Structure probing data (2A3 and DMS) for a 177-nucleotide construct. The RNA was probed in 150 mM KOAc, 10 mM MgCl2 and 150 mM bicine (pH 8.5) at 24 C. 2A3 adducts were read by reverse transcription with SuperScript II with manganese.
[RMDB]
RNA sequence: GGGAACGACUCGAGUAGAGUCGAAAAGUAGUAACUAUCACUAGCCUGGCCUUGAGCAUAAUCACUUUAAUAGGUGUGAAUCGCAUUUCGACAGCUAAGCAGAUUUCAAAUGCAUUUGCAGCUAUUCGUUUUUCACAGCUUUCGAGCUGUGAAAAACAAAAGAAACAACAACAACAAC
Reactivity to 2A3 in 0.01 (KOAc 150mM, MgCl2 10mM, bicine 150mM(pH8.5), 24C), signal-to-noise 3, nucleotides 027 to 126: g120u090a000g010u050a010a120c060u030a030u130c030a030c050u020a020g040c010c030u040g060g020c020c020u050u070g070a030g010c020a030u090a060a030u130c070a050c130u100u140u110a060a060u020a040g200g000u000g010u030g020a030a000u020c100g010c000a000u000u050u070c070g000a040c030a110g070c040u120a160a060g090c100a060g070a210u060u100u000c000a000a010a000u000g000c010a010u000u030u060g020c010a030g020c000u010a020u050u100c030
Reactivity to DMS in 0.01 (KOAc 150mM, MgCl2 10mM, bicine 150mM(pH8.5), 24C), signal-to-noise 1, nucleotides 027 to 126: g030u020a090g000u000a030a040c050u010a120u000c060a090c000u000a030g040c000c000u000g060g010c000c040u000u000g000a030g050c090a080u000a090a140u030c070a090c170u000u000u030a010a000u060a030g000g010u020g050u080g000a030a000u000c130g030c000a000u000u000u000c170g030a010c290a090g000c030u040a080a250g050c020a040g030a130u000u000u000c000a000a000a000u000g000c000a010u000u010u000g000c060a030g020c030u000a050u000u070c300